[RMDB]
RNA sequence: GGGAACGACUCGAGUAGAGUCGAAAACGCCGUCGGUCGGAUCGUGCCGGAGCGACUCAGCGCGAUCGUCGCCGGUAUCGCCGAUGGGUGCAUGCGUGCCGGCUGUGCGCUGCUUGGCGGCGAGACCGUCCUAGGACGACUUCGGUCGUCCUAGGACAAAAGAAACAACAACAACAAC
Reactivity to 2A3 in 0.01 (KOAc 150mM, MgCl2 10mM, bicine 150mM(pH8.5), 24C), signal-to-noise 2, nucleotides 027 to 126: c010g000c000c000g000u000c040g000g010u030c010g110g020a250u030c010g020u050g100c000c050g100g000a060g010c050g030a050c010u000c050a010g000c010g010c030g060a080u130c050g100u050c040g030c010c000g000g020u030a110u250c000g000c020c080g070a050u060g040g070g110u150g110c020a050u180g030c020g010u010g030c000c040g040g000c040u070g040u050g000c000g000c000u030g000c000u050u240g000g000c000g020g010c000g010a000g030a030c000c010
Reactivity to DMS in 0.01 (KOAc 150mM, MgCl2 10mM, bicine 150mM(pH8.5), 24C), signal-to-noise 2, nucleotides 027 to 126: c040g000c030c000g000u000c010g030g000u000c060g040g000a080u010c060g010u010g000c120c040g010g040a080g000c080g000a110c070u000c040a080g050c020g010c040g000a110u000c120g000u000c090g020c030c010g000g000u000a020u000c020g020c000c160g000a130u000g010g000g030u000g000c050a050u020g020c010g010u000g000c010c020g000g000c080u000g010u010g010c020g010c040u000g000c110u000u000g040g020c010g000g020c010g000a110g010a290c080c000